The record gives the reactivity of an RNA of 207 nucleotides to 2A3.
The RNA was probed in 150 mM KOAc, 10 mM MgCl2 and 150 mM bicine (pH 8.5) at 24 C.
The 2A3 profile rests on 581 reads.
RNA sequence: GGGAACGACUCGAGUAGAGUCGAAAAUAUUCCGGUGUGGGAUACUUGGUAAUAUGUAACGCUAAUUGCAUAAGAUUGUAGGACGGAAUUUACAGUCUUGGUUUUUAUAAACCUGAACCUAAGUAAGAAUAGUAAGAGCGGUUCGCCGCUCUUACAACCUAUCGUACAGCUUCGGCUGUACGAUAGGAAAAGAAACAACAACAACAAC
Reactivity to 2A3 in 0.01 (KOAc 150mM, MgCl2 10mM, bicine 150mM(pH8.5), 24C), signal-to-noise 2, nucleotides 027 to 156: u100a030u010u040c030c010g080g090u250g010u110g030g050g030a040u090a050c010u020u060g020g000u010a020a040u030a030u090g030u010a060a030c020g030c210u120a190a130u070u050g000c040a000u000a120a030g000a010u040u000g000u030a010g010g140a010c130g010g050a020a060u050u100u010a000c020a010g020u000c000u010u010g010g010u000u000u000u040u170a270u130a120a070a050c070c000u050g020a060a040c020c030u070a090a000g000u030a040a040g020a100a020u140a080g000u010a000a000g000a030g040c000g030g010u000u040c180g010c080c000g000c000u000c000u000u000a000c000a000a000
2A3 adducts were read by reverse transcription with SuperScript II with manganese.